[RMDB]
RNA sequence: GGGAACGACUCGAGUAGAGUCGAAAAGGGACACAGCAGUGAUAAAAAUUAAGCUAUGAACGAAAGUUUGACUAAGUCAUGUUAAUUAAGGGUUGGUAAACUUCGUGCCAGCCACCGCGGUCAUACGCACUCAUACAGUCUUCGGACUGUAUGAGUGAAAAGAAACAACAACAACAAC
Reactivity to 2A3 in 0.01 (KOAc 150mM, MgCl2 10mM, bicine 150mM(pH8.5), 24C), signal-to-noise 6, nucleotides 027 to 126: g060g000g020a030c030a010c020a040g070c030a010g060u050g080a100u200a100a130a000a020a020u160u090a050a000g040c060u110a060u140g050a050a030c020g020a160a150a080g030u070u110u150g050a050c010u050a040a100g090u020c040a060u070g050u080u120a090a070u090u100a130a110g080g000g020u030u020g010g000u050a120a090a090c060u150u120c060g040u030g060c040c010a000g020c000c000a030c000c010g020c010g000g000u020c010a020u030a120c030g000
Reactivity to DMS in 0.01 (KOAc 150mM, MgCl2 10mM, bicine 150mM(pH8.5), 24C), signal-to-noise 4, nucleotides 027 to 126: g010g010g010a090c020a080c080a060g030c010a050g000u020g020a090u020a010a040a050a070a040u020u010a040a090g010c070u030a070u020g010a080a080c040g000a070a050a070g000u010u010u000g010a070c040u010a030a110g020u010c020a030u000g020u020u030a050a080u020u040a110a080g020g010g010u000u010g000g010u010a030a010a040c150u010u020c120g010u000g010c090c090a050g000c000c000a020c050c060g010c050g000g010u010c050a020u020a130c150g000